Record summary
An RNA of 207 nucleotides, treated with DMS and 2A3 and read out base by base. For 2A3 the reverse transcriptase was SuperScript II with manganese. For 2A3, 1,872 sequencing reads were counted. The reactions ran in a buffer of 150 mM KOAc, 10 mM MgCl2 and 150 mM bicine (pH 8.5), at 24 C.
RNA sequence: GGGAACGACUCGAGUAGAGUCGAAAAGUUGGCUUGCUAGCUAAGAUUUAAUCAGAGCAUCCUACGUUCGGGAUAAUGAACGAUUCCCGCCUUGAGGGUCAGAAAGGCUAAACCUGUGAAUGAGCGGGGGGUCAAUACCCAAUUUGGACAGCAGUUCGAGAUAAUGAUACUUCGGUAUCAUUAUCUCAAAAGAAACAACAACAACAAC
Reactivity to DMS in 0.01 (KOAc 150mM, MgCl2 10mM, bicine 150mM(pH8.5), 24C), signal-to-noise 2, nucleotides 027 to 156: g000u020u010g020g020c080u000u000g010c030u000a140g040c000u020a050a100g000a110u000u000u020a090a130u000c030a100g020a080g030c020a140u000c020c020u010a130c080g020u000u000c060g030g000g010a100u000a010a100u000g000a030a050c060g000a280u000u000c010c030c010g020c070c040u000u000g010a060g020g000g000u000c070a130g030a110a040a090g040g020c060u010a040a030a130c050c010u010g010u000g010a100a130u000g020a070g060c000g020g040g030g050g010g030u000c040a080a120u000a100c010c020c010a030a210u010u000u000g000g010a080c050a070g010c050a070g030u000u000c070
Reactivity to 2A3 in 0.01 (KOAc 150mM, MgCl2 10mM, bicine 150mM(pH8.5), 24C), signal-to-noise 3, nucleotides 027 to 156: g030u050u040g020g030c040u040u050g040c070u090a070g030c050u050a110a080g040a230u110u100u260a120a110u110c070a030g020a010g050c000a060u050c000c010u040a110c010g000u000u020c010g040g000g010a090u080a220a040u190g000a020a010c000g000a000u040u060c000c000c000g020c010c000u010u040g050a030g010g010g030u050c050a000g070a050a040a020g010g000c000u010a070a050a010c010c010u060g040u050g120a120a100u090g020a040g070c070g000g000g000g000g000g000u020c020a030a060u070a150c010c020c000a020a100u070u060u060g030g010a010c010a050g000c020a010g030u060u090c040

For DMS the reverse transcriptase was MarathonRT.